[RMDB]
This 177-nucleotide RNA was probed chemically with 2A3 and DMS. The reactions ran in a buffer of 150 mM KOAc, 10 mM MgCl2 and 150 mM bicine (pH 8.5), at 24 C. For 2A3 the reverse transcriptase was SuperScript II with manganese.
RNA sequence: GGGAACGACUCGAGUAGAGUCGAAAACACACAAUUCACCACCCGCUCACCGCCUGCGCGGGCCAGAUGAUGCCGGUACGCUUACCCGGUGGCGAUCUUCGGUCGAUGGAGUGCGCGCCAGCGACUCCUAGUGGUUAGCGUUCGCGCUAACCACUAGAAAAGAAACAACAACAACAAC
Reactivity to 2A3 in 0.01 (KOAc 150mM, MgCl2 10mM, bicine 150mM(pH8.5), 24C), signal-to-noise 5, nucleotides 027 to 126: c070a000c010a010c030a020a150u110u080c050a050c020c000a030c000c010c000g030c000u020c040a070c010c030g060c010c020u100g010c050g010c020g030g020g000c010c010a040g010a050u120g020a040u120g050c030c020g010g020u070a060c070g010c090u070u120a080c020c000c000g020g020u030g040g000c030g070a090u020c010u040u070c050g040g040u040c040g070a080u130g030g020a050g030u180g110c030g000c000g020c030c010a030g030c010g030a020c020u030c010
Reactivity to DMS in 0.01 (KOAc 150mM, MgCl2 10mM, bicine 150mM(pH8.5), 24C), signal-to-noise 3, nucleotides 027 to 126: c050a100c120a080c130a130a110u020u000c030a100c010c030a100c040c050c020g020c050u000c050a080c050c040g000c010c030u000g000c070g000c050g000g010g040c050c020a080g050a030u020g000a120u030g010c000c000g000g020u000a050c110g030c070u000u000a110c070c010c000g010g010u010g000g010c050g020a060u010c000u020u010c040g010g010u000c020g000a070u040g030g000a010g020u000g000c020g000c010g030c060c120a060g010c020g010a070c020u000c040